[RMDB]
RNA sequence: GGGAACGACUCGAGUAGAGUCGAAAAGCUAAGAUGCAUUGCGGAGCUUGUGGGUACGGUUGGGCUUAGUCGAAGCACAGUCAUGCAAGUGGCUAGUUGUAAUGCUAGCUAACUCAAUGGGGCUCACGACUAUGUAUUGGUUCGCCAAUACAUAGUCAAAAGAAACAACAACAACAAC
Reactivity to 2A3 in 0.01 (KOAc 150mM, MgCl2 10mM, bicine 150mM(pH8.5), 24C), signal-to-noise 9, nucleotides 027 to 126: g010c020u080a080a030g060a110u140g040c060a100u060u170g030c050g040g000a020g010c020u070u060g050u040g040g010g020u070a060c050g020g030u050u030g050g010g000c030u030u040a040g030u100c050g070a050a000g010c020a010c010a040g020u030c010a020u080g040c030a060a040g010u000g020g000c000u010a040g030u040u090g170u220a110a060u170g010c000u000a000g000c000u020a070a020c000u010c030a010a080u070g050g000g020g000c010u010c010a030c050
Reactivity to DMS in 0.01 (KOAc 150mM, MgCl2 10mM, bicine 150mM(pH8.5), 24C), signal-to-noise 9, nucleotides 027 to 126: g010c050u010a090a090g010a080u010g010c060a100u010u000g010c050g010g000a080g010c040u000u000g020u000g000g010g010u010a060c100g010g020u010u010g000g000g010c110u000u000a060g010u020c060g010a070a090g020c030a050c070a050g010u000c040a060u000g010c180a090a080g010u000g000g000c000u000a030g010u000u010g020u020a070a080u010g010c010u000a080g000c010u000a020a040c030u000c080a070a060u010g000g000g000g010c030u000c090a070c170